Chemical mapping of a 177-nucleotide RNA with 2A3 and DMS.
For 2A3, 1,612 sequencing reads were counted.
For DMS, 1,607 sequencing reads were counted.
Conditions: 150 mM KOAc, 10 mM MgCl2 and 150 mM bicine (pH 8.5), 24 C.
DMS adducts were read by reverse transcription with MarathonRT.
[RMDB]
RNA sequence: GGGAACGACUCGAGUAGAGUCGAAAAUGGGGAUUAUCUCUUCCUGCAGAAGAAGCUGUGGGAUCUGACAAUCAAUGUGUCCAUGAAAGUCCUCAGCUUAAGAAAGAUGUAUUGCGGCUUCAUUUCCGACCCGUAUUCAGUUCGCUGAAUACGGGUCAAAAGAAACAACAACAACAAC
Reactivity to 2A3 in 0.01 (KOAc 150mM, MgCl2 10mM, bicine 150mM(pH8.5), 24C), signal-to-noise 2, nucleotides 027 to 126: u040g000g000g000g040a020u070u100a100u210c040u050c000u050u020c000c010u000g040c040a010g030a260a000g120a050a000g060c000u010g010u100g040g040g000a000u030c040u050g030a000c010a040a060u160c010a120a090u250g020u020g020u170c030c060a070u150g030a170a000a010g060u040c000c000u010c000a020g020c020u080u010a040a000g060a080a050a010g050a040u070g050u130a080u130u190g070c060g030g000c000u070u020c040a070u060u040u100c020c000
Reactivity to DMS in 0.01 (KOAc 150mM, MgCl2 10mM, bicine 150mM(pH8.5), 24C), signal-to-noise 2, nucleotides 027 to 126: u000g000g000g010g000a080u010u000a050u000c070u010c050u020u020c030c020u070g020c070a060g020a150a140g010a070a060g030c010u000g020u030g040g000g010a010u010c030u010g010a020c040a040a060u000c220a160a080u030g000u000g000u000c040c180a090u010g010a090a070a130g010u010c030c000u010c030a040g010c010u000u010a070a080g010a100a050a090g010a060u000g020u000a100u000u010g040c200g000g040c010u010u000c030a090u000u000u000c080c050